The record gives the reactivity of an RNA of 177 nucleotides to DMS and 2A3. For 2A3 the reverse transcriptase was SuperScript II with manganese. Source: RMDB library OK2TRN, as collected in RNAgym. The RNA was probed in 150 mM KOAc, 10 mM MgCl2 and 150 mM bicine (pH 8.5) at 24 C. The 2A3 profile rests on 1,394 reads.
[RMDB]
RNA sequence: GGGAACGACUCGAGUAGAGUCGAAAAGCGUGAUUAGGGAUAAUUAUUAAUCUGUAAUCCCGCGAACAGAACAGGGCCCAAUUAUUAAACGGGGCCCAUGGACGAAUUUUAAGUCCGCACACGCGAAACCUAAUAUAGGCUUCGGCCUAUAUUAGGUAAAAGAAACAACAACAACAAC
Reactivity to DMS in 0.01 (KOAc 150mM, MgCl2 10mM, bicine 150mM(pH8.5), 24C), signal-to-noise 3, nucleotides 027 to 126: g010c010g040u000g000a100u010u010a100g000g000g010a010u000a080a190u030u010a140u020u030a100a060u000c040u010g000u000a040a020u010c010c060c000g000c030g010a110a100c110a060g000a080a140c160a060g020g010g020c000c010c000a050a100u000u010a100u020u020a090a130a120c270g020g000g000g000c000c000c000a010u000g020g000a040c030g030a140a070u010u010u010u000a080a190g010u000c000c010g020c130a060c130a060c080g020c060g010a090a100
Reactivity to 2A3 in 0.01 (KOAc 150mM, MgCl2 10mM, bicine 150mM(pH8.5), 24C), signal-to-noise 2, nucleotides 027 to 126: g000c000g000u020g000a040u010u030a020g000g000g040a000u030a080a060u180u190a110u200u080a110a030u060c000u020g290u110a000a010u020c020c080c020g000c020g010a000a020c030a020g120a100a030c050a160g010g010g020c000c000c000a020a040u260u100a090u110u220a140a140a050c050g000g000g000g000c020c020c000a000u000g000g020a010c030g020a090a150u030u170u160u200a270a010g010u000c000c020g000c020a130c000a000c050g080c000g060a100a010